[RMDB]
RNA sequence: GGGAACGACUCGAGUAGAGUCGAAAACUGGCAAAAAGCCUGUGCCGCGCGUUUAGAUAAUCAACCACUGUAUGCCAUUGCCACGGUGACAGGCACUGAACGUGACCCGCAAUGCCGCUCGCAGCAAUCUUACAUCGCUAUUCGUAGCGAUGUAAGAAAAAGAAACAACAACAACAAC
Reactivity to 2A3 in 0.01 (KOAc 150mM, MgCl2 10mM, bicine 150mM(pH8.5), 24C), signal-to-noise 2, nucleotides 027 to 126: c000u030g040g030c020a000a000a040a300a000g010c010c020u050g030u070g040c000c030g040c010g000c020g020u040u040u030a050g020a110u090a140a130u210c040a010a080c060c040a070c060u070g020u060a110u160g050c030c050a080u060u170g070c030c010a090c050g030g000u080g060a040c020a010g000g000c030a010c040u060g030a030a020c030g000u030g070a100c020c010c000g000c040a010a050u040g010c020c000g000c030u000c060g020c000a060g010c020a030a040
Reactivity to DMS in 0.01 (KOAc 150mM, MgCl2 10mM, bicine 150mM(pH8.5), 24C), signal-to-noise 3, nucleotides 027 to 126: c090u010g030g020c060a040a090a110a170a120g000c020c040u010g010u000g020c000c030g020c050g010c060g030u000u000u010a050g010a130u010a080a090u000c120a070a090c080c030a110c070u010g000u000a090u000g020c050c060a080u000u010g020c040c070a050c070g010g010u000g010a030c100a040g000g010c060a060c100u000g000a050a050c090g010u000g010a090c020c010c040g010c070a070a060u000g000c020c040g020c050u000c070g010c080a030g000c120a070a130

Conditions: 150 mM KOAc, 10 mM MgCl2 and 150 mM bicine (pH 8.5), 24 C.
Structure probing data (2A3 and DMS) for a 177-nucleotide construct.
Reactivities are rounded to 0.1 and cut off at 0 and 3.
Reactivities are given for positions 27 through 126.
For DMS, 2,843 sequencing reads were counted.